[RMDB]
Chemical mapping of a 207-nucleotide RNA with DMS and 2A3. For DMS, 1,977 sequencing reads were counted. Source: RMDB library ARCHII, as collected in RNAgym. The reactions ran in a buffer of 150 mM KOAc, 10 mM MgCl2 and 150 mM bicine (pH 8.5), at 24 C. For 2A3 the reverse transcriptase was SuperScript II with manganese. DMS adducts were read by reverse transcription with MarathonRT.

RNA sequence: GGGAACGACUCGAGUAGAGUCGAAAAGCUCUCGCUGCCUAAUCGAAGUACAGUAGAUUACUGGCUUUAUUCGACUAUUAGAUAGUUGAACGAGACACUGCUCCAAAGAUGUUGUUCCGAAUCGGAGGGUAAAGCGGUGCAGGUUAAAUCGGAAAUAUCCUAAGUAUCCCUUCGGGGAUACUUAGGAAAAAGAAACAACAACAACAAC
Reactivity to DMS in 0.01 (KOAc 150mM, MgCl2 10mM, bicine 150mM(pH8.5), 24C), signal-to-noise 2, nucleotides 027 to 156: g020c060u000c020u000c020g070c050u020g030c000c020u010a000a080u010c060g010a150a300g020u000a120c090a110g010u010a260g000a100u000u000a020c050u000g000g040c010u010u000u000a120u010u000c020g020a010c030u000a000u010u010a120g010a300u000a000g020u010u000g010a000a080c060g030a090g010a050c030a080c010u000g020c030u000c040c010a070a110a190g000a070u000g020u000u000g000u000u000c050c000g030a070a070u000c030g010g000a300g010g010g060u000a030a080a080g000c050g050g000u000g040c030a080g040g020u010u000a040a110a150u010c030g000g000a140a020a100u000a290
Reactivity to 2A3 in 0.01 (KOAc 150mM, MgCl2 10mM, bicine 150mM(pH8.5), 24C), signal-to-noise 1, nucleotides 027 to 156: g010c010u000c000u020c000g000c060u010g030c000c010u010a000a000u030c000g060a110a010g060u240a300c090a060g040u030a020g010a020u000u000a110c170u160g020g060c040u080u090u030a050u060u030c020g000a010c000u000a000u220u150a210g190a270u060a020g000u000u020g010a010a000c020g000a030g010a000c000a000c010u000g000c000u010c000c000a000a000a060g010a010u120g020u090u030g000u150u000c000c010g000a010a070u090c010g000g040a010g040g050g030u200a190a180a000g010c000g030g010u000g000c040a030g000g000u140u230a010a100a040u000c030g000g030a000a000a160u180a030